[RMDB]
RNA sequence: GGGAACGACUCGAGUAGAGUCGAAAAUAAAAUUACUUGAAAAAGCUGUUCUUUGUGUCAAGAAGGCCACACGCCAGUUCAUCAUGACCGUUACAUUUUGAGGUUAUAAAGUUCAAUUGCAACACAUAAGAAACAAAAUUUUCGAAUUUUGUUUCUUAAAAGAAACAACAACAACAAC
Reactivity to 2A3 in 0.01 (KOAc 150mM, MgCl2 10mM, bicine 150mM(pH8.5), 24C), signal-to-noise 4, nucleotides 027 to 126: u150a000a060a010a040u150u090a050c010u040u060g070a030a020a030a010a010g040c050u070g050u050u020c000u090u150u050g090u020g040u070c040a090a020g040a050a030g170g000c020c000a030c010a010c040g040c020c010a050g000u010u050c020a080u030c000a010u080g020a020c000c010g110u080u140a050c030a120u130u160u110u230g080a080g010g020u020u040a040u070a160a110a030g020u030u040c050a050a080u040u090g030c040a050a000c020a010c010a100u040
Reactivity to DMS in 0.01 (KOAc 150mM, MgCl2 10mM, bicine 150mM(pH8.5), 24C), signal-to-noise 2, nucleotides 027 to 126: u010a080a210a120a130u020u010a030c010u010u030g010a020a100a090a080a100g010c060u000g000u010u000c020u020u010u010g010u030g000u000c050a070a080g000a130a100g010g000c020c040a040c080a050c110g000c040c030a040g010u000u000c030a080u010c080a080u020g000a020c040c050g010u000u010a100c110a100u020u000u010u000g000a080g020g010u010u000a050u000a080a090a140g000u020u000c050a030a050u010u000g010c060a030a010c060a050c120a100u000